Record summary: This 177-nucleotide RNA was probed chemically with 2A3 and DMS. Conditions: 150 mM KOAc, 10 mM MgCl2 and 150 mM bicine (pH 8.5), 24 C.
[RMDB]
RNA sequence: GGGAACGACUCGAGUAGAGUCGAAAAUCGGGUACUUGUAUUUGAUGAGGCGGCCCCUUGCCGCUGUCGGAGUUUUCUCCGCAAGGCUGCCCACAGGUUCUGCUGCUUCAUGCGCUGGCUUGGCCAGAGCGCAGGGAAUGUUCGCAUUCCCUGCGCUAAAAGAAACAACAACAACAAC
Reactivity to 2A3 in 0.01 (KOAc 150mM, MgCl2 10mM, bicine 150mM(pH8.5), 24C), signal-to-noise 2, nucleotides 027 to 126: u080c030g030g010g010u060a070c040u040u130g060u170a150u100u260u270g090a060u090g100a000g020g030c020g000g010c010c090c000c040u040u180g030c000c030g040c120u010g110u140c010g020g000a010g000u110u050u300u100c030u000c000c000g000c000a010a030g010g000c050u050g000c000c070c000a050c010a010g080g000u250u000c090u080g000c010u040g000c010u040u080c110a060u100g000c030g000c020u010g000g000c030u030u170g110g010c010c010a010g020
Reactivity to DMS in 0.01 (KOAc 150mM, MgCl2 10mM, bicine 150mM(pH8.5), 24C), signal-to-noise 2, nucleotides 027 to 126: u000c110g010g000g000u010a040c100u000u010g020u000a100u010u010u010g010a080u010g010a130g000g000c010g010g000c000c210c040c080u000u000g000c020c020g040c120u000g010u010c020g030g000a020g010u000u000u010u000c000u010c000c000g000c030a070a050g010g020c070u000g010c000c050c020a110c180a050g010g000u010u000c100u010g020c020u000g010c010u010u010c050a050u000g000c090g010c020u000g010g010c020u010u020g020g000c000c020a050g010

The DMS profile rests on 3,168 reads. DMS adducts were read by reverse transcription with MarathonRT.